[RMDB]
RNA sequence: GGGAACGACUCGAGUAGAGUCGAAAAACGUGUCAUGUAGUUAUCUGGACUUGAGCGAUGGACUGCACGUGAUUGGAUUAAGUGAUUUAGCUGAUAUAACGUCAAAUGGGUUAAGCGUGUUGCCUGAUAUUUCGUGUGAUCAUUUGGACGUGGUGGAGUGAAUUUAGCUCUUCGGAGCUAAAUUCACAAAAGAAACAACAACAACAAC
Reactivity to 2A3 in 0.01 (KOAc 150mM, MgCl2 10mM, bicine 150mM(pH8.5), 24C), signal-to-noise 2, nucleotides 027 to 156: a000c070g020u000g110u110c070a060u070g030u060a080g060u090u140a180u110c090u080g130g050a080c040u030u070g110a050g000c070g020a050u090g070g050a090c090u070g000c070a000c030g030u070g020a110u010u120g060g020a000u000u100a040a040g020u020g030a040u010u080u150a050g000c040u040g010a030u030a000u010a110a070c070g000u020c060a080a050a050u080g000g000g060u050u060a020a050g050c030g020u020g020u040u070g090c030c030u090g090a060u020a060u140u070u060c040g000u050g080u060g050a080u080c030a030u050u030u100g060g000a010c010g000u020g000g070u040g070g010a050
Chemical mapping of a 207-nucleotide RNA with 2A3. The data come from the RNA Mapping Database (RMDB), library OK3TST. As a SHAPE reagent, 2A3 marks flexible, mostly unpaired nucleotides at the ribose 2'-OH. For 2A3 the reverse transcriptase was SuperScript II with manganese. Values cover nucleotides 27 to 156. Conditions: 150 mM KOAc, 10 mM MgCl2 and 150 mM bicine (pH 8.5), 24 C.